The record gives the reactivity of an RNA of 177 nucleotides to 2A3 and DMS. The RNA was probed in 150 mM KOAc, 10 mM MgCl2 and 150 mM bicine (pH 8.5) at 24 C. Source: RMDB library TTRINS, as collected in RNAgym. The DMS profile rests on 2,859 reads. The 2A3 profile rests on 6,207 reads. Reactivities are given for positions 27 through 126.
RNA sequence: GGGAACGACUCGAGUAGAGUCGAAAAGAUAUGGAAAGGGAACUACGCUACGAUAGUCUGACGAAGUAAUGAUUAUUCGGAAACGAAUAAUCAUUAUCGAAGACUAUGUAGCGCCCUUUCCUAAGUCCUCUAACCAACAGUUCGCUGUUGGUUAGAGAAAAGAAACAACAACAACAAC
Reactivity to 2A3 in 0.01 (KOAc 150mM, MgCl2 10mM, bicine 150mM(pH8.5), 24C), signal-to-noise 2, nucleotides 027 to 126: g000a040u100a060u170g000g030a020a000a010g020g020g020a070a000c140u240a040c300g000c020u010a000c040g300a060u000a010g000u000c010u040g150a230c150g170a300a060g090u040a000a000u000g010a000u000u010a010u020u010c010g000g000a050a060a020c010g000a010a000u000a010a010u010c000a000u000u000a010u020c010g060a010a000g000a000c010u000a010u020g010u010a010g010c010g000c000c000c000u000u020u000c000c000u010a010a000g000u010c020
Reactivity to DMS in 0.01 (KOAc 150mM, MgCl2 10mM, bicine 150mM(pH8.5), 24C), signal-to-noise 3, nucleotides 027 to 126: g000a140u010a300u000g000g010a000a010a000g010g000g020a160a060c140u020a300c070g000c000u000a000c020g010a040u000a010g010u000c000u000g000a240c250g000a080a080g030u000a000a000u000g000a020u000u000a000u010u000c000g010g010a110a110a180c000g020a040a000u000a000a010u000c000a000u000u000a010u010c050g000a300a020g000a010c010u000a000u000g020u000a000g020c020g000c000c000c000u000u000u000c000c000u010a010a080g000u000c080